Conditions: 150 mM KOAc, 10 mM MgCl2 and 150 mM bicine (pH 8.5), 24 C. The record gives the reactivity of an RNA of 177 nucleotides to DMS and 2A3. It was measured as part of the RMDB library M2PK50. Reactivities are given for positions 27 through 126. For 2A3 the reverse transcriptase was SuperScript II with manganese. Values are in units of 0.01, from 0 to 300, in steps of 10.
[RMDB]
RNA sequence: GGGAACGACUCGAGUAGAGUCGAAAACCCGUUCAUUUCGAUGAACGGGAGUGGGUAACCCUAGGACCAGUAGUGGGAGCCGUAGUGGCCGUGGGACCAGUAAAGAGUUAACAUUCGUGUUAACUAAGUUCCUAUGAAAAUUCGUUUUCAUAGGAACAAAAGAAACAACAACAACAAC
Reactivity to DMS in 0.01 (KOAc 150mM, MgCl2 10mM, bicine 150mM(pH8.5), 24C), signal-to-noise 8, nucleotides 027 to 126: c000c000c000g000u000u000c000a000u000u000u010c170g010a020u000g000a010a010c000g010g000g000a030g010u000g010g010g010u000a080a120c050c020c020u010a130g010g010a120c050c030a080g010u010a100g020u010g000g000g010a160g020c030c020g010u010a090g010u000g010g000c030c040g010u010g000g020g010a100c070c060a090g010u010a070a090a120g000a020g000u000u000a010a010c000a040u000u010c200g020u000g010u000u000a000a010c010u000a050a110
Reactivity to 2A3 in 0.01 (KOAc 150mM, MgCl2 10mM, bicine 150mM(pH8.5), 24C), signal-to-noise 6, nucleotides 027 to 126: c010c000c000g000u000u000c000a010u040u040u150c240g140a020u010g010a000a010c010g000g020g000a010g050u130g030g010g030u060a120a150c000c010c030u030a090g050g050a110c010c040a060g060u090a010g060u210g050g030g020a030g040c030c040g030u080a050g100u080g040g000c010c020g010u050g010g000g020a060c020c020a010g030u110a030a150a040g160a010g010u000u000a000a000c010a010u030u120c200g030u030g000u010u000a010a000c000u010a050a010